[RMDB]
RNA sequence: GGGAACGACUCGAGUAGAGUCGAAAAAAAAACGGCAGCAAGCCGAGCAACGCGAGCUACGCGAGCAAGUACAGCAAGUACAGCAACAUGAGCAACAUGAGCAAGUAGAGCAACUACAGCAAAAAAACAAUAGGCAAUAGUUCGCUAUUGCCUAUUGAAAAGAAACAACAACAACAAC
Reactivity to 2A3 in 0.01 (KOAc 150mM, MgCl2 10mM, bicine 150mM(pH8.5), 24C), signal-to-noise 2, nucleotides 027 to 126: a010a000a000a000a020c040g080g000c040a120g080c070a030a110g010c030c000g030a020g000c010a050a120c030g020c030g040a010g060c060u130a070c040g000c010g030a010g040c030a050a020g020u030a040c050a020g040c040a110a030g020u010a020c010a050g010c020a030a040c010a080u100g050a020g060c010a030a040c000a080u080g020a040g040c030a060a030g060u040a030g030a020g050c010a050a040c020u040a020c010a020g060c070a010a070a060a020a060a010a000
Reactivity to DMS in 0.01 (KOAc 150mM, MgCl2 10mM, bicine 150mM(pH8.5), 24C), signal-to-noise 3, nucleotides 027 to 126: a080a050a050a090a080c070g000g010c020a070g020c120a110a100g010c040c010g000a120g010c070a080a050c090g010c040g000a140g000c040u010a060c040g000c050g000a100g000c060a050a080g020u000a020c060a050g010c080a020a020g000u000a030c070a080g010c050a060a030c070a050u000g020a100g010c070a030a070c090a060u000g010a040g020c030a070a050g010u010a030g020a080g000c050a070a050c040u000a060c060a100g020c070a010a000a040a100a050a070a080

Conditions: 150 mM KOAc, 10 mM MgCl2 and 150 mM bicine (pH 8.5), 24 C. The record gives the reactivity of an RNA of 177 nucleotides to 2A3 and DMS. For 2A3 the reverse transcriptase was SuperScript II with manganese. Reactivities are rounded to 0.1 and cut off at 0 and 3. For DMS, 2,477 sequencing reads were counted. It was measured as part of the RMDB library M2PK90. For DMS the reverse transcriptase was MarathonRT.